[RMDB]
RNA sequence: GGGAACGACUCGAGUAGAGUCGAAAAAACACUUAUAGAUCACAGCUUGGAUGCGUUUUCUUUAAUGGUGCUGAUAUUUCUGACACCAUUCCUGAUGAGAAACAGAAUGGUCACAGUUUAUAUCUAGAGACACUGUCCUUCGGGACAGUGAAAAGAAACAACAACAACAAC
Reactivity to DMS in 0.01 (KOAc 150mM, MgCl2 10mM, bicine 150mM(pH8.5), 24C), signal-to-noise 6, nucleotides 027 to 129: a070a070c110a060c110u080u010a060u030a040g020a060u020c000a000c000a110g030c030u030u050g020g010a080u000g020c080g020u050u020u000u040c040u040u010u040a040a040u070g020g030u010g030c000u050g020a100u020a030u000u000u000c000u030g040a150c200a070c020c010a050u020u010c070c080u020g020a120u050g040a090g000a070a100a060c000a070g000a070a030u030g020g040u040c170a220c040a020g020u080u000u000a050u000a040u050c030u070a040g000a130g010a190
Reactivity to 2A3 in 0.01 (KOAc 150mM, MgCl2 10mM, bicine 150mM(pH8.5), 24C), signal-to-noise 3, nucleotides 027 to 129: a030a000c090a020c030u100u070a060u060a100g030a000u050c030a010c040a030g010c030u040u070g100g040a060u120g050c020g030u000u010u040u010c040u010u060u060a100a090u160g070g010u090g050c030u010g030a010u010a040u040u030u010c000u000g040a010c000a020c060c000a000u010u000c020c010u050g030a130u120g050a060g080a040a090a010c000a000g030a000a000u010g000g000u030c050a000c000a030g010u000u020u010a040u000a010u000c050u050a020g030a000g000a120
Notes
Structure probing data (DMS and 2A3) for a 170-nucleotide construct. The DMS profile rests on 14,500 reads. The data come from the RNA Mapping Database (RMDB), library 15KLIB. DMS adducts were read by reverse transcription with MarathonRT.